[RMDB]
Notes
The data come from the RNA Mapping Database (RMDB), library RSTRND. An RNA of 207 nucleotides, treated with 2A3 and read out base by base.
RNA sequence: GGGAACGACUCGAGUAGAGUCGAAAAUCAUGUCAGUAAGCAUGCCGGGGAAUGGUGGUUUACCCCGUUAUCAAAUGAUUACCGACCAAUAAUUGGCGAAACUCGUUUCGCGUUGGCUGCCUAAUUCAAGGAAUUAGCGUGCCUUCAUGCUAAGGGUGUGUGAAUCGUUCUUCGGAACGAUUCACACAAAAGAAACAACAACAACAAC
Reactivity to 2A3 in 0.01 (KOAc 150mM, MgCl2 10mM, bicine 150mM(pH8.5), 24C), signal-to-noise 1, nucleotides 027 to 156: u180c000a000u050g030u120c060a000g100u180a080a000g000c000a020u010g120c000c000g000g050g000g050a070a080u070g060g000u070g010g000u020u040u130a080c000c000c000c000g090u030u000a020u060c020a090a100a040u030g000a040u070u000a000c000c020g020a100c050c000a050a000u130a080a120u180u060g060g020c000g020a050a050a000c050u060c040g150u010u000u080c000g020c000g000u010u020g000g000c080u080g020c000c000u030a020a000u030u020c150a250a010g200g000a210a000u000u000a000g000c020g000u070g010c000c000u010u030c020a040u020g060c010u100a050a000g050g000g000u000
Values cover nucleotides 27 to 156.